This 177-nucleotide RNA was probed chemically with DMS and 2A3. 2A3 adducts were read by reverse transcription with SuperScript II with manganese. As a SHAPE reagent, 2A3 marks flexible, mostly unpaired nucleotides at the ribose 2'-OH. The RNA was probed in 150 mM KOAc, 10 mM MgCl2 and 150 mM bicine (pH 8.5) at 24 C. For 2A3, 7,016 sequencing reads were counted.

RNA sequence: GGGAACGACUCGAGUAGAGUCGAAAAGGUCCUGCCCUUGCACAGAUGGGGUCUCAUUCUGCCCCAUCCCCAUAGGUUUGCCCAGAUGCUGGAGAAGGUGUGCGUGGAGACGGUGGAGAGUGGAGCCCUAUCGGCUCUAAUUCGUUAGAGCCGAUAGAAAAGAAACAACAACAACAAC
Reactivity to DMS in 0.01 (KOAc 150mM, MgCl2 10mM, bicine 150mM(pH8.5), 24C), signal-to-noise 6, nucleotides 027 to 126: g000g010u000c020c020u000g010c040c010c020u000u000g010c070a080c180a100g010a040u000g010g010g010g010u010c140u000c130a120u000u010c090u000g000c000c000c000c010a020u000c010c030c040c050a090u010a090g000g010u000u010u010g020c030c020c020a100g000a090u000g000c040u010g010g010a100g010a080a080g020g010u000g010u000g010c080g010u010g000g010a070g010a070c080g000g020u010g010g010a070g010a060g010u000g000g010a120g010c050c070
Reactivity to 2A3 in 0.01 (KOAc 150mM, MgCl2 10mM, bicine 150mM(pH8.5), 24C), signal-to-noise 4, nucleotides 027 to 126: g050g010u050c010c000u020g030c010c000c010u050u090g030c060a060c030a090g040a030u020g000g010g000g050u010c010u000c030a210u220u020c040u070g020c000c010c000c010a010u000c020c010c010c000a090u100a040g100g010u050u080u120g030c000c000c000a040g050a100u100g020c050u060g020g030a080g020a100a040g040g010u070g010u050g060c050g030u070g000g040a100g000a020c040g000g050u080g000g030a060g000a010g040u040g000g030a030g000c010c000